[RMDB]
RNA sequence: GGGAACGACUCGAGUAGAGUCGAAAAAAGCCUUCGUCACUCCAAACGUUUCGGCGAGAAGCAGGCCAUUAUCGCCGGCAUGGCGGCCGACGCGCUGGGCUGGCGUUCGCGACGCGAGGCUGGAUGGAAGACGUUAUACCUUCGGGUAUAACGUCUUAAAAGAAACAACAACAACAAC
Reactivity to 2A3 in 0.01 (KOAc 150mM, MgCl2 10mM, bicine 150mM(pH8.5), 24C), signal-to-noise 1, nucleotides 027 to 126: a010a020g040c050c010u060u010c030g020u020c000a030c080u040c020c020a110a110a160c070g010u000u090u140c030g010g030c070g030a010g040a040a020g010c030a060g040g050c040c020a060u150u110a110u170c060g000c030c020g010g050c140a160u100g120g050c000g010g000c020c030g030a060c080g000c030g000c030u010g060g020g000c000u030g020g000c040g020u030u180c070g030c050g090a050c050g020c030g010a040g020g010c060u020g000g000a030u080g090g090
Reactivity to DMS in 0.01 (KOAc 150mM, MgCl2 10mM, bicine 150mM(pH8.5), 24C), signal-to-noise 2, nucleotides 027 to 126: a060a070g000c000c000u000u000c020g010u000c010a080c030u000c050c060a030a090a090c070g000u000u000u000c020g020g030c030g010a110g020a090a070g010c040a080g030g010c020c070a050u010u000a090u010c210g010c010c070g000g010c080a050u010g010g020c150g010g020c020c020g010a060c090g000c030g000c060u000g010g010g040c090u000g000g000c010g010u000u010c070g010c080g010a040c050g020c130g000a070g000g000c020u000g030g010a180u010g000g000

Notes
An RNA of 177 nucleotides, treated with 2A3 and DMS and read out base by base. 2A3 adducts were read by reverse transcription with SuperScript II with manganese. The 2A3 profile rests on 1,178 reads.